[RMDB]
RNA sequence: GGGAACGACUCGAGUAGAGUCGAAAAGAUAUGGAGUCUCCGAGCACUACGAUGAACUACGCUUUCAAAGUAUCGGAAACGAUAUACAAAGGCGCAUCGUAGUGCGUUUGACGAGACUCCUAAGUCAGCAUUAUUAGACGUUCGCGUCUAAUAAUGCAAAAGAAACAACAACAACAAC
Reactivity to DMS in 0.01 (KOAc 150mM, MgCl2 10mM, bicine 150mM(pH8.5), 24C), signal-to-noise 2, nucleotides 027 to 126: g000a030u000a300u000g010g000a000g020u000c000u000c010c030g030a140g010c000a020c000u020a010c010g010a020u000g010a120a090c200u040a300c030g000c010u000u000u000c160a060a250a170g000u000a020u010c000g020g010a210a120a210c000g000a000u000a050u010a070c300a070a080a030g030g010c010g010c000a010u000c000g010u000a020g040u000g000c000g000u000u000u010g000a180c300g000a010g000a000c000u010c000c000u000a020a070g000u000c050a180
Reactivity to 2A3 in 0.01 (KOAc 150mM, MgCl2 10mM, bicine 150mM(pH8.5), 24C), signal-to-noise 2, nucleotides 027 to 126: g020a040u150a070u190g010g000a010g010u000c000u000c020c020g030a010g000c010a000c010u040a000c000g010a010u030g020a190a080c130u300a080c300g010c040u150u030u050c200a170a120a060g030u030a010u000c000g000g000a060a040a060c050g010a000u000a000u030a030c110a010a090a000g030g000c000g000c050a000u000c000g030u000a000g000u000g000c000g000u020u010u070g000a050c010g000a000g000a010c010u000c010c010u000a010a000g050u020c090a000
Chemical mapping of a 177-nucleotide RNA with DMS and 2A3. Conditions: 150 mM KOAc, 10 mM MgCl2 and 150 mM bicine (pH 8.5), 24 C. Source: RMDB library TTRINS, as collected in RNAgym.